Chemical mapping of a 207-nucleotide RNA with 2A3 and DMS.
Values cover nucleotides 27 to 156.
The reactions ran in a buffer of 150 mM KOAc, 10 mM MgCl2 and 150 mM bicine (pH 8.5), at 24 C.
In probing experiments dimethyl sulfate is read out at A N1 and C N3, which are open when not base-paired.
As a SHAPE reagent, 2A3 marks flexible, mostly unpaired nucleotides at the ribose 2'-OH.
For DMS, 1,515 sequencing reads were counted.
RNA sequence: GGGAACGACUCGAGUAGAGUCGAAAAAACACAGGUAAGAGAGAUGCUAUCUUCAUUCUUGUGAGCUUCUACAAGGCUGUUCUUGGCAUAAGCAAAGUUAUGAAAGCCAUUUCAUCCAGCCUCAUGCCAUUAGGUAAAGAUGAAUUCAGCACGGGGGUAUUGCCCACAAGUUCGCUUGUGGGCAAUAAAAAGAAACAACAACAACAAC
Reactivity to 2A3 in 0.01 (KOAc 150mM, MgCl2 10mM, bicine 150mM(pH8.5), 24C), signal-to-noise 1, nucleotides 027 to 156: a000a010c050a030c030a050g060g010u070a100a010g080a000g020a000g000a040u070g120c020u070a090u160c020u060u030c030a080u000u060c000u010u050g030u060g040a040g010c020u060u050c030u050a080c010a040a030g030g070c020u010g060u100u000c050u030u010g040g000c030a050u080a050a050g000c040a200a080a030g050u240u100a040u110g030a090a030a000g070c020c000a020u000u030u050c000a030u010c050c000a030g000c000c000u030c010a020u070g040c080c000a040u010u140a020g020g020u030a050a020a020g040a010u020g010a000a100u040u030c040a040g000c000a010c000g000g000g000g000g010
Reactivity to DMS in 0.01 (KOAc 150mM, MgCl2 10mM, bicine 150mM(pH8.5), 24C), signal-to-noise 1, nucleotides 027 to 156: a090a040c060a090c060a150g050g010u000a070a040g000a190g020a030g000a150u010g040c100u000a070u000c050u000u000c030a130u000u000c000u000u000g000u000g000a130g040c040u000u020c100u000a100c070a040a090g000g000c070u000g000u000u000c100u000u000g010g000c030a110u000a020a060g010c050a170a050a130g040u010u000a020u000g000a130a060a160g050c100c060a170u000u000u000c020a060u040c030c030a300g020c000c020u000c070a080u000g020c130c080a060u000u010a020g040g010u000a060a100a160g000a040u000g000a040a090u000u000c090a050g030c040a090c060g000g060g030g020g010